[RMDB]
RNA sequence: GGGAACGACUCGAGUAGAGUCGAAAACCACCUUGGGGUGCCCUAUCCGAAGCACUGCAGUUUCGGUAGAAAGGCUAAGGACCUCGCAAUGAGGUAAGGUGGGACUUUUCCUUCUGGAACCAAGCGGGACUACAUAUUAGUUCGCUAAUAUGUAGUCAAAAGAAACAACAACAACAAC
Reactivity to DMS in 0.01 (KOAc 150mM, MgCl2 10mM, bicine 150mM(pH8.5), 24C), signal-to-noise 7, nucleotides 027 to 126: c010c000a040c030c010u000u000g000g010g010g010u000g020c010c010c000u000a120u000c000c000g010a020a010g020c010a080c220u020g020c210a140g010u000u000u000c000g000g000u000a020g000a070a120a110g000g010c010u000a120a130g010g000a050c010c000u000c000g010c220a150a090u000g000a010g000g010u000a010a010g000g010u000g000g010g000a070c120u000u000u000u000c010c000u010u000c090u000g010g010a090a120c080c080a060a110g000c140g010g000
Reactivity to 2A3 in 0.01 (KOAc 150mM, MgCl2 10mM, bicine 150mM(pH8.5), 24C), signal-to-noise 7, nucleotides 027 to 126: c000c000a010c000c000u040u030g080g040g000g050u110g030c000c010c000u000a010u000c010c000g000a000a000g010c040a060c250u300g040c070a080g000u000u000u010c000g000g000u000a000g020a020a040a010g000g000c000u020a060a060g070g080a030c000c000u000c000g010c140a230a290u300g000a000g000g010u010a010a010g000g000u010g000g010g020a010c020u080u070u020u020c000c000u050u090c080u110g090g060a070a060c040c010a100a040g060c120g110g050
Chemical mapping of a 177-nucleotide RNA with DMS and 2A3. The DMS profile rests on 13,109 reads. For DMS the reverse transcriptase was MarathonRT.